The data come from the RNA Mapping Database (RMDB), library OK1LIB. The record gives the reactivity of an RNA of 177 nucleotides to DMS and 2A3. The reactions ran in a buffer of 150 mM KOAc, 10 mM MgCl2 and 150 mM bicine (pH 8.5), at 24 C. The 2A3 profile rests on 4,219 reads.
[RMDB]
RNA sequence: GGGAACGACUCGAGUAGAGUCGAAAAGAUGAGGAAUCGCGUACGAGAAACUCAUUAGUACAAUGCUCUGGAAUGAUUCUUCAAUAGCGGAGCAGACGUUAGAGAAGAGACGUGAAAGCGUUAGAAAGGGAUAACUAUUGUUCGCAAUAGUUAUCCCAAAAGAAACAACAACAACAAC
Reactivity to DMS in 0.01 (KOAc 150mM, MgCl2 10mM, bicine 150mM(pH8.5), 24C), signal-to-noise 5, nucleotides 027 to 126: g000a020u000g000a020g000g000a120a110u000c020g010c300g010u030a070c130g020a000g010a080a050a300c030u010c010a010u000u000a120g000u030a080c150a060a090u010g000c030u010c020u000g000g020a200a060u020g000a060u030u000c020u000u000c010a020a120u010a040g000c010g000g000a120g010c070a060g000a110c020g030u000u010a040g000a300g000a030a020g000a050g010a050c020g010u000g000a100a090a060g000c040g030u020u030a090g000a080a090a120
Reactivity to 2A3 in 0.01 (KOAc 150mM, MgCl2 10mM, bicine 150mM(pH8.5), 24C), signal-to-noise 5, nucleotides 027 to 126: g040a020u010g000a000g060g040a050a120u030c020g000c100g130u140a100c070g030a030g050a150a170a010c020u020c010a000u020u060a030g030u070a010c060a080a060u060g000c000u020c020u040g030g100a110a070u090g070a120u160u030c000u020u020c020a050a050u060a050g070c020g000g050a100g030c020a030g080a070c050g040u060u090a030g000a000g000a150a000g030a010g010a030c010g000u040g040a070a030a020g010c010g010u000u010a040g120a080a080a060